[RMDB]
RNA sequence: GGGAACGACUCGAGUAGAGUCGAAAAAGAUCGGGGACAGGAAGUCGGCUGAUGACAACCGUGACACGCAGAAUUCUCCUUCCCCGAACAUCAUGUUCGGAUCCUCGAUGACGCCUUCUCCGAGCACGUCAUGGCGCUCCGCGUCGAGUAGAGCCUGCAAUAGGCCCAGUUUCGACUGGGCCUAUUGAAAAGAAACAACAACAACAAC
Reactivity to 2A3 in 0.01 (KOAc 150mM, MgCl2 10mM, bicine 150mM(pH8.5), 24C), signal-to-noise 3, nucleotides 027 to 156: a000g070a020u040c000g000g000g020g010a020c070a070g010g010a010a030g020u060c020g040g010c030u060g010a240u150g050a090c050a100a080c070c070g060u070g030a020c020a000c090g040c010a010g030a090a140u100u050c010u030c080c000u040u030c000c020c000c000g000a000a010c000a030u150c030a050u120g050u050u050c000g020g010a060u060c000c010u020c020g070a050u090g070a060c030g080c050c050u160u090c090u080c030c010g010a020g010c040a020c070g110u080c080a050u080g010g010c070g000c050u030c050c060g050c020g090u100c020g010a000g000u100a040g020a000g020c010c000u020g000
Reactivity to DMS in 0.01 (KOAc 150mM, MgCl2 10mM, bicine 150mM(pH8.5), 24C), signal-to-noise 2, nucleotides 027 to 156: a100g000a110u010c020g000g000g030g000a070c150a060g030g020a050a110g010u010c020g050g000c010u020g000a140u000g010a140c020a020a050c040c040g030u000g020a160c050a110c160g000c080a130g010a080a200u010u000c080u010c030c000u000u000c020c000c000c010g000a000a040c040a120u000c140a110u010g000u000u000c030g020g000a080u000c000c010u000c010g030a090u020g030a090c040g040c050c020u000u000c050u000c040c000g000a140g000c050a070c000g010u000c080a110u000g010g010c010g020c010u010c020c040g020c080g000u000c070g010a060g010u010a090g000a060g020c000c010u010g040